This 207-nucleotide RNA was probed chemically with DMS and 2A3. Conditions: 150 mM KOAc, 10 mM MgCl2 and 150 mM bicine (pH 8.5), 24 C. 2A3 adducts were read by reverse transcription with SuperScript II with manganese.
[RMDB]
RNA sequence: GGGAACGACUCGAGUAGAGUCGAAAAGCCGCGGCAAGUGGAGUUAGCGAGAAGAGACUAAGCUUUGGUUUCUUCAAGUGAAGCGGUCACCAAUCAGGUGUGGUAGUUACCGUAAAAAAUCCGGAUUAAUGCCUCAGCGCGUUCGCGCGCUGAGGAAGUUUCAAUUAUCCUUCGGGAUAAUUGAAACAAAAGAAACAACAACAACAAC
Reactivity to DMS in 0.01 (KOAc 150mM, MgCl2 10mM, bicine 150mM(pH8.5), 24C), signal-to-noise 1, nucleotides 027 to 156: g000c040c010g000c050g010g000c000a090a080g060u020g000g020a140g020u000u000a240g020c020g020a300g030a040a080g020a080g010a040c000u000a090a110g050c190u000u000u020g020g030u000u000u010c000u000u000c020a050a300g000u000g000a100a300g010c000g050g000u000c030a100c010c030a070a150u000c050a090g010g020u020g030u000g000g030u010a050g030u000u010a010c060c000g010u020a000a030a040a050a090a150u000c050c020g020g000a300u020u010a020a170u010g010c020c010u000c000a020g000c000g030c040g000u000u010c300g020c000g100c040g030c040u050g020a020g000g000a000a010
Reactivity to 2A3 in 0.01 (KOAc 150mM, MgCl2 10mM, bicine 150mM(pH8.5), 24C), signal-to-noise 3, nucleotides 027 to 156: g030c000c000g000c030g030g050c070a120a090g070u100g100g050a100g040u180u120a030g030c040g000a060g000a030a000g010a000g000a000c010u050a060a080g240c090u170u130u170g020g000u000u000u020c000u000u010c020a030a020g010u010g030a030a020g020c020g030g030u020c030a020c030c000a030a090u190c080a020g070g090u070g000u030g120g020u030a040g020u100u110a040c010c020g030u050a050a090a000a000a040a130u040c030c000g000g000a070u150u130a140a050u180g030c000c000u000c010a010g000c010g000c000g010u050u050c100g010c000g000c000g000c070u000g000a000g000g000a000a000

For 2A3, 1,446 sequencing reads were counted.